[RMDB]
RNA sequence: GGGAACGACUCGAGUAGAGUCGAAAACGGAUACGCGCCGAUUUAGCGAGUUGCAGCAGUUGCAGGAAACAAUGACGCUAAAUAUUCAGGACGGCCGCAACGCUGAAGAUAUUUUAUUAACGUUAUACUAAUCGCAUCCAUUCGUGGAUGCGAUUAGAAAAGAAACAACAACAACAAC
Reactivity to DMS in 0.01 (KOAc 150mM, MgCl2 10mM, bicine 150mM(pH8.5), 24C), signal-to-noise 2, nucleotides 027 to 126: c040g010g000a090u000a130c140g000c050g000c050c020g040a070u000u000u000a030g000c000g040a300g040u000u000g020c040a070g000c060a160g010u000u010g030c010a130g030g000a080a120a160c110a040a130u030g000a040c150g000c020u040a010a040a040u000a120u000u010c130a100g020g010a300c260g000g000c020c040g000c050a030a090c090g000c010u000g010a080a130g000a080u010a030u000u000u000u010a060u020u030a130a000c050g010u000u000a100u020a140
Reactivity to 2A3 in 0.01 (KOAc 150mM, MgCl2 10mM, bicine 150mM(pH8.5), 24C), signal-to-noise 1, nucleotides 027 to 126: c030g000g010a050u150a130c050g000c010g000c010c010g030a010u040u040u000a010g000c010g010a030g030u090u030g010c030a020g000c010a040g110u220u140g030c050a060g130g000a040a140a000c020a030a080u090g090a010c030g020c030u000a000a040a060u140a050u010u100c020a020g000g030a000c070g030g030c010c030g030c000a020a020c020g040c070u090g070a030a010g070a080u160a150u150u280u120u030a260u040u170a070a010c020g000u040u050a150u100a220
Structure probing data (DMS and 2A3) for a 177-nucleotide construct. For 2A3, 845 sequencing reads were counted. The DMS profile rests on 1,128 reads.